[RMDB]
RNA sequence: GGGAACGACUCGAGUAGAGUCGAAAAACAGUACCAGCUGCUACGGCAGCUGGUACUGAACUUUCAUGGAGUUAAGAAACCACGUAAACAAAGCGGAACCGAAAAGCUAAACGAGUAGGAAGAAUAAGUAUACCACUCGUUUCGACGAGUGGUAUACAAAAGAAACAACAACAACAAC
Reactivity to 2A3 in 0.01 (KOAc 150mM, MgCl2 10mM, bicine 150mM(pH8.5), 24C), signal-to-noise 3, nucleotides 027 to 126: a020c000a010g000u000a020c000c010a030g000c000u020g020c000u010a030c180g180g000c030a030g000c000u000g000g000u000a000c000u020g000a000a000c000u020u020u040c020a060u030g210g040a060g080u040u070a030a090g060a050a070a030c010c030a080c050g120u140a090a190a050c080a050a110a000g010c020g090g000a030a130c000c000g050a000a010a000a020g030c120u300a280a050a000c010g010a000g000u010a010g070g020a050a000g040a070a130u300a250a010
Reactivity to DMS in 0.01 (KOAc 150mM, MgCl2 10mM, bicine 150mM(pH8.5), 24C), signal-to-noise 1, nucleotides 027 to 126: a250c010a000g030u000a000c000c000a000g000c000u000g020c000u000a130c050g010g060c000a000g000c000u000g040g000u000a040c000u000g020a160a140c190u000u070u040c060a100u000g020g000a060g010u000u000a110a190g000a300a090a040c080c000a150c060g000u000a060a160a040c170a080a020a010g000c090g000g000a040a040c000c080g000a060a160a040a000g050c000u000a040a040a040c110g010a000g000u000a110g060g000a230a110g000a040a080u000a070a110

Structure probing data (2A3 and DMS) for a 177-nucleotide construct. 2A3 is a SHAPE reagent: it acylates the 2'-hydroxyl of flexible nucleotides of all four kinds. For DMS, 1,362 sequencing reads were counted. Conditions: 150 mM KOAc, 10 mM MgCl2 and 150 mM bicine (pH 8.5), 24 C. The 2A3 profile rests on 1,320 reads.